Conditions: 150 mM KOAc, 10 mM MgCl2 and 150 mM bicine (pH 8.5), 24 C. An RNA of 177 nucleotides, treated with 2A3 and read out base by base. It was measured as part of the RMDB library OK1LIB.
[RMDB]
RNA sequence: GGGAACGACUCGAGUAGAGUCGAAAAGAAAGAAUGCACGCUUUUUUCUGUCUUUUUUUUUUUUGCGUGCUAAUUUGACAGAAAAAUUAUAUGGUUGCUUCACACAAUUGCAACCUUUGUGUGAAAAGGGAUAACAUUACUUCGGUAAUGUUAUCCCAAAAGAAACAACAACAACAAC
Reactivity to 2A3 in 0.01 (KOAc 150mM, MgCl2 10mM, bicine 150mM(pH8.5), 24C), signal-to-noise 2, nucleotides 027 to 126: g090a010a100a000g070a000a050u270g000c000a000c000g060c000u040u240u050u000u020u000c050u020g040u000c110u000u150u000u080u030u060u000u000u010u010u190u110g010c010g000u020g020c000u040a090a020u000u090u170g000a000c000a000g150a000a040a020a000a020u300u300a200u220a050u150g090g020u030u010g020c000u020u150c060a020c000a000c030a110a110u100u150g000c020a060a000c000c000u000u030u000g020u000g000u010g060a020a020a080a100